This 177-nucleotide RNA was probed chemically with DMS and 2A3. The RNA was probed in 150 mM KOAc, 10 mM MgCl2 and 150 mM bicine (pH 8.5) at 24 C. DMS adducts were read by reverse transcription with MarathonRT.
RNA sequence: GGGAACGACUCGAGUAGAGUCGAAAAGUGAGACCCUUCGGGGUCUCACAAAGAACGCUGCAGCGAGCAGCACGGAGUGAACCGAACACGCACGCAAUAAAAAAAGAUCACAGUUCGCUGUGAUCAAGCUUAUAUGUGACUUCGGUCACAUAUAAGCAAAAGAAACAACAACAACAAC
Reactivity to DMS in 0.01 (KOAc 150mM, MgCl2 10mM, bicine 150mM(pH8.5), 24C), signal-to-noise 2, nucleotides 027 to 126: g000u000g010a000g010a000c000c000c000u000u010c160g020g000g020g000u000c010u000c000a000c000a010a140a080g020a130a190c130g000c040u000g000c010a180g020c120g000a200g030c010a020g010c010a070c100g000g000a140g030u000g000a090a100c030c010g030a070a070c060a030c070g030c060a050c100g020c070a150a090u060a000a000a050a060a050a110a080g010a000u000c000a010c000a020g010u000u000c190g000c000u010g010u000g000a000u000c000a020a040
Reactivity to 2A3 in 0.01 (KOAc 150mM, MgCl2 10mM, bicine 150mM(pH8.5), 24C), signal-to-noise 2, nucleotides 027 to 126: g000u000g000a000g000a010c000c000c040u000u070c200g040g010g000g010u010c010u000c000a000c000a000a010a000g000a060a010c070g000c030u040g000c000a080g090c040g200a070g020c020a000g020c020a010c030g060g010a090g030u090g030a050a040c000c030g010a050a010c040a000c090g050c030a010c040g030c060a060a110u230a220a110a030a000a000a000a020g000a000u000c000a000c000a020g010u050u070c150g030c070u000g000u000g000a000u000c000a000a000